This 177-nucleotide RNA was probed chemically with 2A3. The reactions ran in a buffer of 150 mM KOAc, 10 mM MgCl2 and 150 mM bicine (pH 8.5), at 24 C. For 2A3, 865 sequencing reads were counted.
RNA sequence: GGGAACGACUCGAGUAGAGUCGAAAAACGCCACCUCUACGGAGGUGGCGAUGGUGUGAACAGGUUACCUGUGGUGCAGUGUAGUAGUGGAAAAAGCUGCAUCAUGUGUGACCUGCCCACACCGCAAAGUAACUCGUCACUUCGGUGACGAGUUACUAAAAGAAACAACAACAACAAC
Reactivity to 2A3 in 0.01 (KOAc 150mM, MgCl2 10mM, bicine 150mM(pH8.5), 24C), signal-to-noise 1, nucleotides 027 to 126: a000c000g000c000c000a000c000c000u000c000u030a060c270g070g000a000g030g030u000g000g000c020g000a000u000g000g000u000g000u000g000a060a010c010a010g030g000u000u000a000c000c000u010g000u000g000g030u000g000c020a010g000u000g000u280a220g060u090a030g170u230g120g080a140a090a020a060a090g020c000u000g000c010a000u000c000a000u050g040u010g000u000g010a000c000c000u020g000c000c000c000a000c000a000c000c040g000c000a110a120